Chemical mapping of a 177-nucleotide RNA with DMS and 2A3.
For DMS, 7,821 sequencing reads were counted.
As a SHAPE reagent, 2A3 marks flexible, mostly unpaired nucleotides at the ribose 2'-OH.
The RNA was probed in 150 mM KOAc, 10 mM MgCl2 and 150 mM bicine (pH 8.5) at 24 C.
2A3 adducts were read by reverse transcription with SuperScript II with manganese.
RNA sequence: GGGAACGACUCGAGUAGAGUCGAAAAACAAUAGGAAGCCAUCUUGGUGCUUUAACACAAACUCUCCCCAGUGAUGAGGGUUGAGCCAAAGCCAGAUUGGCAAGCAGAGAGGAGACUUGUGUACAAGAAAUCUCUUACUGUUCGCAGUAAGAGAUUUAAAAGAAACAACAACAACAAC
Reactivity to DMS in 0.01 (KOAc 150mM, MgCl2 10mM, bicine 150mM(pH8.5), 24C), signal-to-noise 7, nucleotides 027 to 126: a100c080a080a080u010a120g010g020a100a080g010c010c020a070u000c050u010u000g010g020u010g010c040u000u000u000a070a060c070a040c100a040a050a120c090u000c010u000c010c030c020c040a120g020u010g010a130u010g010a100g000g000g010u000u000g020a110g010c040c060a030a030a080g020c020c070a050g010a110u000u000g010g020c020a070a090g010c050a070g010a110g010a060g010g010a070g000a050c100u000u000g020u000g010u000a090c150a070a080g000
Reactivity to 2A3 in 0.01 (KOAc 150mM, MgCl2 10mM, bicine 150mM(pH8.5), 24C), signal-to-noise 5, nucleotides 027 to 126: a000c050a040a100u160a100g150g030a080a020g000c020c010a050u020c060u080u130g050g030u080g050c020u080u090u090a140a020c060a000c020a050a070a080c010u000c000u000c000c000c010c010a020g060u120g140a160u080g040a150g030g030g020u060u080g030a010g000c020c040a050a000a000g030c020c000a030g010a230u090u070g040g000c010a010a010g000c030a010g080a020g010a030g090g020a020g020a030c010u050u030g020u020g020u060a050c030a020a040g040
Source: RMDB library OK2TST, as collected in RNAgym.